[RMDB]
This 177-nucleotide RNA was probed chemically with 2A3 and DMS. For 2A3, 2,155 sequencing reads were counted. Values cover nucleotides 27 to 126. Source: RMDB library OK1LIB, as collected in RNAgym. Conditions: 150 mM KOAc, 10 mM MgCl2 and 150 mM bicine (pH 8.5), 24 C.
RNA sequence: GGGAACGACUCGAGUAGAGUCGAAAAGACCGCUGAAUGCGGAAGUACUAGAUCAACUAGAAAGUAGAUGAAUACAAAAGCUACGUCUCGAAACUAGUUGAUCUAGUGCAUUCGAGACGUAGGAAGACGUAGGUAGCCUGUUCGCAGGCUACCUACGAAAAGAAACAACAACAACAAC
Reactivity to 2A3 in 0.01 (KOAc 150mM, MgCl2 10mM, bicine 150mM(pH8.5), 24C), signal-to-noise 3, nucleotides 027 to 126: g030a020c000c000g000c070u150g180a270a070u300g020c000g000g000a000a040g000u000a010c000u020a000g030a050u010c000a020a020c000u000a000g160a140a180a000g070u210a000g080a070u160g110a090a120u260a090c130a020a210a040a050g060c010u070a010c010g030u020c000u000c010g040a030a040a020c000u000a010g000u010u100g000a000u000c000u030a000g000u000g000c000a000u000u060c000g020a000g000a010c020g030u030a040g080g040a070a000g020a010
Reactivity to DMS in 0.01 (KOAc 150mM, MgCl2 10mM, bicine 150mM(pH8.5), 24C), signal-to-noise 2, nucleotides 027 to 126: g000a050c030c000g000c000u040g030a100a050u010g000c000g010g000a080a070g000u000a150c020u030a010g000a020u000c000a020a040c010u010a040g000a150a050a030g030u070a110g000a050u010g000a160a070u030a120c180a110a060a060a170g020c090u000a000c020g010u000c060u020c000g000a120a070a070c000u000a020g000u000u030g000a060u010c030u000a000g010u000g000c090a070u010u000c030g000a070g000a060c050g030u000a050g010g000a160a070g000a170